[RMDB]
RNA sequence: GGGAACGACUCGAGUAGAGUCGAAAAUCCUCUGUUUCGAGCAUUUCGAGGUCCUUGAAAGCCCCAGUUUCGACGAGCUCCUUGACAACUUUCUGUCUCAUAAAUACGUUCUGGACGUUCGACGCCACAAUAAAGAAAGGGAAGAACAGAUGGAACCCUCAGAAGGAGAAUUCGUUCUCCUUCUGAGAAAAGAAACAACAACAACAAC
Reactivity to DMS in 0.01 (KOAc 150mM, MgCl2 10mM, bicine 150mM(pH8.5), 24C), signal-to-noise 2, nucleotides 027 to 156: u010c010c000u000c060u010g000u010u020u020c040g010a200g030c070a180u000u000u000c030g010a100g040g010u000c010c000u000u020g020a070a100a120g000c030c030c010c050a170g000u000u000u000c000g010a120c060g000a120g040c020u000c020c040u000u000g000a100c050a130a150c020u000u000u000c050u000g010u000c000u030c100a130u000a080a070a100u050a070c090g010u000u010c020u020g000g000a170c040g010u010u000c060g010a070c030g030c010c080a110c050a060a080u000a120a080a170g010a020a090a050g020g020g000a080a100g020a060a060c010a120g000a150u010g000g000a070a080c070c100
Reactivity to 2A3 in 0.01 (KOAc 150mM, MgCl2 10mM, bicine 150mM(pH8.5), 24C), signal-to-noise 4, nucleotides 027 to 156: u020c010c010u000c030u050g040u000u060u100c040g020a040g010c060a120u080u080u070c040g030a030g020g040u040c020c010u080u110g090a140a120a120g020c000c000c000c040a050g010u000u010u060c020g010a020c010g010a020g030c020u010c000c020u060u120g020a030c040a120a060c080u060u150u110c080u090g100u040c000u000c080a100u100a270a130a020u170a110c070g020u010u060c020u050g000g040a040c040g030u020u040c050g040a050c030g080c020c010a090c020a120a120u200a170a170a040g080a100a050a000g020g000g020a030a010g010a010a010c000a000g030a020u080g010g020a040a060c000c000
The record gives the reactivity of an RNA of 207 nucleotides to DMS and 2A3. The RNA was probed in 150 mM KOAc, 10 mM MgCl2 and 150 mM bicine (pH 8.5) at 24 C. For 2A3 the reverse transcriptase was SuperScript II with manganese.